[RMDB]
RNA sequence: GGGAACGACUCGAGUAGAGUCGAAAAAUACUUCUCAGGAUGGCGCGUUGCAGUCCAACAAGAUCCAGGGUCUGUACAGAAUUUUCCUAUACCUCGAGUCGGGUUUGGAAUCUAAGGUUGACUCGCUAAAACUUUACGUGGUUCGCCACGUAAAGAAUCGUAAGCAGGAGUUCGCUCCUGCUUACGAAAAAGAAACAACAACAACAAC
Reactivity to 2A3 in 0.01 (KOAc 150mM, MgCl2 10mM, bicine 150mM(pH8.5), 24C), signal-to-noise 1, nucleotides 027 to 156: a000u160a090c030u060u080c020u050c000a020g070g030a060u080g000g090c020g000c030g070u090u010g100c030a000g020u000c020c000a070a050c020a060a060g050a030u050c080c120a020g000g030g050u030c010u030g150u140a010c000a030g300a250a000u000u000u000u220c010c000u120a070u150a140c020c000u010c120g030a000g040u010c000g000g020g000u010u000u030g020g030a050a050u130c070u150a070a070g030g040u160u230g020a030c020u030c000g000c080u160a130a100a000a020c000u000u000u000a000c000g000u000g000g050u030u070c120g050c030c030a000c000g000u000a000a000a000g020a030a030